Chemical mapping of a 177-nucleotide RNA with DMS and 2A3.
The data come from the RNA Mapping Database (RMDB), library OK2TST.
The RNA was probed in 150 mM KOAc, 10 mM MgCl2 and 150 mM bicine (pH 8.5) at 24 C.
For 2A3 the reverse transcriptase was SuperScript II with manganese.
The DMS profile rests on 3,713 reads.
High DMS reactivity at an A or C suggests that its Watson-Crick edge is free.

RNA sequence: GGGAACGACUCGAGUAGAGUCGAAAAAGUGGAUGAGGACGUCGGGAGCGCGUCCAAUCGCCGCGGUGAUGGCUUCGGUCGGGAUAGCGGUCUCGCGCAUCUUGCCUAUGCUGGGCGGCACCAGCAGCGAACCAUCAGAUUUCGAUCUGAUGGUUCGAAAAGAAACAACAACAACAAC
Reactivity to DMS in 0.01 (KOAc 150mM, MgCl2 10mM, bicine 150mM(pH8.5), 24C), signal-to-noise 3, nucleotides 027 to 126: a070g010u000g000g010a020u010g020a160g000g000a160c040g010u020c030g000g010g010a070g020c020g010c010g020u000c020c030a130a040u010c120g040c050c010g010c080g020g030u000g000a160u010g010g000c040u000u000c040g020g010u000c150g030g010g000a030u000a100g030c020g000g000u010c020u000c010g000c020g000c030a030u000c020u010u000g000c020c020u000a050u000g000c000u010g010g000g010c100g010g000c120a210c010c000a010g010c030a050g000
Reactivity to 2A3 in 0.01 (KOAc 150mM, MgCl2 10mM, bicine 150mM(pH8.5), 24C), signal-to-noise 2, nucleotides 027 to 126: a000g090u080g000g030a040u050g020a040g150g070a050c040g030u180c040g050g030g030a040g080c020g000c020g020u000c010c000a010a070u070c050g000c000c020g010c080g010g050u120g060a280u260g180g000c000u040u060c070g090g000u120c050g050g000g000a050u110a110g030c010g030g130u010c010u000c020g010c000g000c000a020u000c010u040u090g000c010c010u080a070u100g000c010u020g000g010g000c060g080g000c070a050c050c000a000g000c010a010g000